[RMDB]
RNA sequence: GGGAACGACUCGAGUAGAGUCGAAAAACAGUGAAAUACUACCCGUCGGUGACUGCGACUCUCACUCCGGGAGGAGGACACCGAUAGCCGGGCAGUUUGACUGGGGCGGUACGCGCUCGAAAAGAUAUCGAGCGCGCCCUAUGGUCAUCUCAGCCGGGUAGGAAUACCUCUUCGGAGGUAUUCCUACAAAAGAAACAACAACAACAAC
Reactivity to 2A3 in 0.01 (KOAc 150mM, MgCl2 10mM, bicine 150mM(pH8.5), 24C), signal-to-noise 1, nucleotides 027 to 156: a000c020a000g050u070g120a160a090a000u190a050c030u050a080c000c000c000g000u000c000g000g000u020g040a110c050u160g050c090g060a070c000u000c000u010c000a090c120u140c180c250g000g000g000a000g000g020a020g030g000a000c000a000c000c000g000a020u010a000g050c000c000g010g020g070c040a000g000u040u100u030g010a000c020u000g030g000g000g100c090g000g000u220a090c190g000c000g000c090u000c000g020a020a090a040a020g140a070u210a030u120c000g000a000g010c000g030c000g000c000c000c000u130a170u140g010g010u010c000a010u000c010u010c020a110g140c000c020g000g050

Notes:
Chemical mapping of a 207-nucleotide RNA with 2A3. The reactions ran in a buffer of 150 mM KOAc, 10 mM MgCl2 and 150 mM bicine (pH 8.5), at 24 C. 2A3 is a SHAPE reagent: it acylates the 2'-hydroxyl of flexible nucleotides of all four kinds. It was measured as part of the RMDB library PDB130.